Background: Structure probing data (2A3 and DMS) for a 177-nucleotide construct. The DMS profile rests on 1,848 reads. Values cover nucleotides 27 to 126. The data come from the RNA Mapping Database (RMDB), library M2PK90. Conditions: 150 mM KOAc, 10 mM MgCl2 and 150 mM bicine (pH 8.5), 24 C.
RNA sequence: GGGAACGACUCGAGUAGAGUCGAAAAUACACUUUACGUGUGCUGGUUUCAUUACUUUGUCCCAAACCAGCCACGCGUAAUUAAAGGCCAGUUUGGCCAGGUCCGCGUUAUCGAUGGUCACCAAUAAUAUAGCGAGGUUAUUCGUAACCUCGCUAUAAAAAGAAACAACAACAACAAC
Reactivity to 2A3 in 0.01 (KOAc 150mM, MgCl2 10mM, bicine 150mM(pH8.5), 24C), signal-to-noise 1, nucleotides 027 to 126: u100a010c040a000c070u000u000u000a000c000g020u010g000u010g000c000u000g000g090u000u020u140c100a150u000u290a150c100u160u120u210g090u070c000c020c000a000a000a000c030c010a010g000c020c000a000c000g000c000g000u000a000a040u010u160a110a110a060g010g010c000c010a130g170u130u240u160g070g030c000c000a010g040g000u000c040c020g000c040g030u090u120a130u120c060g080a120u060g040g000u060c010a030c040c040a190a070u140a150a090
Reactivity to DMS in 0.01 (KOAc 150mM, MgCl2 10mM, bicine 150mM(pH8.5), 24C), signal-to-noise 2, nucleotides 027 to 126: u030a100c160a110c190u000u000u000a000c010g020u010g000u010g000c030u000g010g000u000u000u000c150a060u000u000a090c190u000u010u010g000u000c000c040c030a110a040a010c000c000a030g000c130c070a000c000g010c010g010u000a010a010u000u010a040a130a080g010g010c020c000a130g000u000u010u010g030g020c000c010a030g010g000u000c010c030g030c080g010u000u000a080u000c040g010a070u020g010g010u000c050a120c060c030a080a080u000a090a100